Overview: Chemical mapping of a 177-nucleotide RNA with 2A3 and DMS. Source: RMDB library OK1LIB, as collected in RNAgym. Conditions: 150 mM KOAc, 10 mM MgCl2 and 150 mM bicine (pH 8.5), 24 C.

RNA sequence: GGGAACGACUCGAGUAGAGUCGAAAAGAUGAAGUCGCGGAUCUGGAGGCGGCGGGGAUCGGGAUUAUUCAGAUUGACGAACCGGCGCUGCGUGAAGGUUUACCGCUGCGUCGCAGCGACUGGGACGCUAUCGUAUAUAUUUCGAUAUAUACGAUAGAAAAGAAACAACAACAACAAC
Reactivity to 2A3 in 0.01 (KOAc 150mM, MgCl2 10mM, bicine 150mM(pH8.5), 24C), signal-to-noise 9, nucleotides 027 to 126: g080a060u170g080a060a020g060u070c030g010c040g080g040a100u030c040u100g040g030a030g040g060c050g020g030c060g020g000g000g010a060u120c060g040g010g020a060u070u090a060u160u170c050a050g120a210u080u130g060a070c030g010a050a040c010c000g010g000c000g000c000u010g000c010g000u050g080a090a050g070g020u100u110u130a100c040c040g020c030u040g010c040g100u090c020g000c000a000g000c000g090a170c010u010g000g010g000a010c020g000
Reactivity to DMS in 0.01 (KOAc 150mM, MgCl2 10mM, bicine 150mM(pH8.5), 24C), signal-to-noise 9, nucleotides 027 to 126: g020a120u020g010a090a070g010u010c040g020c060g010g010a090u020c050u010g010g000a110g010g010c070g010g010c070g010g000g010g000a050u020c060g000g010g000a090u010u020a080u020u020c110a090g000a110u020u010g000a130c040g010a070a220c040c010g010g000c000g010c000u000g000c010g000u010g010a110a150g000g000u010u030u030a110c210c170g010c010u010g010c080g010u010c020g000c010a030g000c020g000a060c010u000g000g010g000a140c060g010